[RMDB]
Structure probing data (2A3 and DMS) for a 177-nucleotide construct. DMS adducts were read by reverse transcription with MarathonRT. It was measured as part of the RMDB library TTRDEL. High 2A3 reactivity points to a flexible backbone, as in loops and unpaired stretches.
RNA sequence: GGGAACGACUCGAGUAGAGUCGAAAAGAUAUGGACCGACAAAUAGCGAGGAUCUCGGAAACGAGGGAGCUGAUUGUUCGGUCCUAAGUCAAACCAGUAAGGAUGGGUUCGCCCAUCCUUACUGGAAUCAUUGUAAAUUCUUCGGAAUUUACAAUGAAAAAGAAACAACAACAACAAC
Reactivity to 2A3 in 0.01 (KOAc 150mM, MgCl2 10mM, bicine 150mM(pH8.5), 24C), signal-to-noise 3, nucleotides 027 to 126: g040a000u060a030u170g000g000a000c000c010g010a010c000a010a050a050u100a030g010c010g080a260g110g010a020u010c000u010c000g050g010a090a060a050c010g000a010g010g010g000a010g000c020u050g060a160u010u050g080u210u130c000g000g000u010c000c000u000a010a000g000u010c020a000a020a110c000c000a000g000u000a010a000g010g000a010u010g000g040g080u050u220c270g120c030c020c000a000u010c000c000u000u000a000c000u000g000g000a000a000
Reactivity to DMS in 0.01 (KOAc 150mM, MgCl2 10mM, bicine 150mM(pH8.5), 24C), signal-to-noise 5, nucleotides 027 to 126: g010a030u000a300u000g000g010a010c010c000g010a020c010a010a020a150u000a010g010c010g000a050g020g010a020u010c000u000c000g000g010a090a110a190c010g000a020g000g000g000a020g020c000u000g010a050u000u000g000u010u000c010g010g000u000c000c000u010a010a060g010u010c020a110a140a200c000c010a000g010u010a000a010g010g010a010u000g000g000g010u000u020c270g010c000c000c000a000u000c000c000u000u000a000c000u000g000g000a020a030